[RMDB]
RNA sequence: GGGAACGACUCGAGUAGAGUCGAAAAGAUAUGGAUAUAGAACUACAGUAUAGUUCGCAUCGAUCUCGGAAACGAGGGAGCGAACAAUACUGCUAUAUCCUAAGUCAAACUCGCCUUCGGGCGAGAAGACAUCUAAAACCUUCGGGUUUUAGAUGUCAAAAGAAACAACAACAACAAC
Reactivity to DMS in 0.01 (KOAc 150mM, MgCl2 10mM, bicine 150mM(pH8.5), 24C), signal-to-noise 2, nucleotides 027 to 126: g010a060u000a300u010g000g020a010u000a000u000a030g000a050a030c110u020a300c010a010g020u000a020u000a090g010u000u000c000g040c000a230u000c110g000a050u000c010u010c000g000g000a120a080a200c010g000a020g010g000g000a000g020c000g000a000a000c010a070a020u000a000c000u000g000c010u000a010u000a000u000c000c000u000a060a110g000u000c030a130a100a210c000u000c000g020c000c000u000u000c200g010g010g000c000g000a000g030a030a050
Reactivity to 2A3 in 0.01 (KOAc 150mM, MgCl2 10mM, bicine 150mM(pH8.5), 24C), signal-to-noise 3, nucleotides 027 to 126: g030a030u090a040u130g010g010a000u020a010u020a020g030a080a050c110u170a030c300a010g010u000a020u030a060g020u000u000c000g000c010a150u300c040g090a100u010c000u020c010g000g050a140a110a050c010g010a010g010g020g010a030g010c000g000a000a000c000a000a000u000a000c000u020g020c000u010a000u000a000u000c000c000u010a110a000g000u000c020a020a020a180c000u000c010g000c000c010u050u120c300g150g000g000c000g000a000g000a000a000